An RNA of 177 nucleotides, treated with 2A3 and read out base by base.
[RMDB]
RNA sequence: GGGAACGACUCGAGUAGAGUCGAAAACGGAACACAGUGAGUGGACGGAAGAAAUCCCCUUCCCACCUCCCCACUGUCCACUCACUGUCUUCCUAAUAGGAAAUAUAAAUCGGGGGUGGGAAGGGGAGGAUGCUCACCAGUUCGCUGGUGAGCAUCCAAAAGAAACAACAACAACAAC
Reactivity to 2A3 in 0.01 (KOAc 150mM, MgCl2 10mM, bicine 150mM(pH8.5), 24C), signal-to-noise 2, nucleotides 027 to 126: c030g010g000a000a000c000a000c000a000g010u000g000a000g020u000g000g020a000c010g000g030a030a000g100a050a180a190u220c000c000c000c030u000u020c010c000c010a000c000c000u010c030c060c060c020a060c020u030g000u000c000c000a000c000u020c070a000c000u010g000u010c000u050u000c000c000u010a080a030u100a020g060g050a000a150a000u230a030u070a050a210a090u300c190g050g000g000g000g000u000g010g030g020a000a000g000g000g000g000a000

It was measured as part of the RMDB library OK1LIB.